[RMDB]
RNA sequence: GGGAACGACUCGAGUAGAGUCGAAAAGAUAAUGUCUUCGGACAUUAUCCACGCCUAAAGGCUUUAAUUAAUUAGCUAAGCCUCCUAAUUAAAAUGGCAUUAACAACUGUCCAUUCGUGGACAGUAAUUCCCUAUGUAUCUUCGGAUACAUAGGGAAAAAAGAAACAACAACAACAAC
Reactivity to 2A3 in 0.01 (KOAc 150mM, MgCl2 10mM, bicine 150mM(pH8.5), 24C), signal-to-noise 2, nucleotides 027 to 126: g000a000u010a010a000u020g000u010c010u030u070c220g060g000a010c000a000u010u000a000u010c010c000a020c080g040c010c000u080a140a120a010g040g000c000u170u040u000a030a010u070u050a030a090u070u070a020g010c030u070a080a060g040c000c030u140c010c010u210a240a200u210u230a060a160a060a080u130g040g050c070a070u060u080a050a020c040a040a020c010u000g000u030c000c000a010u010u090c170g160u010g000g010a000c000a000g000u000a000a080
Reactivity to DMS in 0.01 (KOAc 150mM, MgCl2 10mM, bicine 150mM(pH8.5), 24C), signal-to-noise 3, nucleotides 027 to 126: g000a000u000a020a000u000g000u000c000u000u020c230g020g010a020c000a010u000u000a000u010c000c060a070c220g010c000c000u000a080a090a160g000g000c010u000u010u000a070a130u000u000a030a040u000u000a020g010c110u000a060a100g000c030c030u000c110c020u010a030a020u000u000a000a030a050a080u000g000g000c040a110u020u010a090a100c270a080a070c000u010g000u000c000c010a040u000u010c160g020u000g000g000a010c000a020g020u000a020a100
An RNA of 177 nucleotides, treated with 2A3 and DMS and read out base by base. Source: RMDB library M2PK50, as collected in RNAgym. Conditions: 150 mM KOAc, 10 mM MgCl2 and 150 mM bicine (pH 8.5), 24 C.